[RMDB]
Structure probing data (DMS) for a 177-nucleotide construct.

RNA sequence: GGGAACGACUCGAGUAGAGUCGAAAAGAUAUGGAGCCCAAGUAAAGAAUGGAACCUUUUGACGGAUGGUGGUCGGAAACGACCAGAAGUCCGAUAAGGUUCAUUCUUUACUUGGGCUCCUAAGUCACUAAUCAGUAUAGUUCGCUAUACUGAUUAGAAAAGAAACAACAACAACAAC
Reactivity to DMS in 0.01 (KOAc 150mM, MgCl2 10mM, bicine 150mM(pH8.5), 24C), signal-to-noise 4, nucleotides 027 to 126: g010a050u000a300u000g000g000a010g000c010c000c000a000a010g010u000a000a010a010g000a020a010u010g020g030a010a020c000c000u000u000u010u010g040a260c130g010g000a020u000g000g020u010g010g010u000c010g000g010a120a100a240c000g010a010c000c000a020g000a300a300g010u000c000c000g010a090u000a010a010g010g000u000u000c010a000u000u000c000u000u000u000a000c010u000u000g000g010g000c000u000c000c000u000a000a050g000u010c050a190
Conditions: 150 mM KOAc, 10 mM MgCl2 and 150 mM bicine (pH 8.5), 24 C.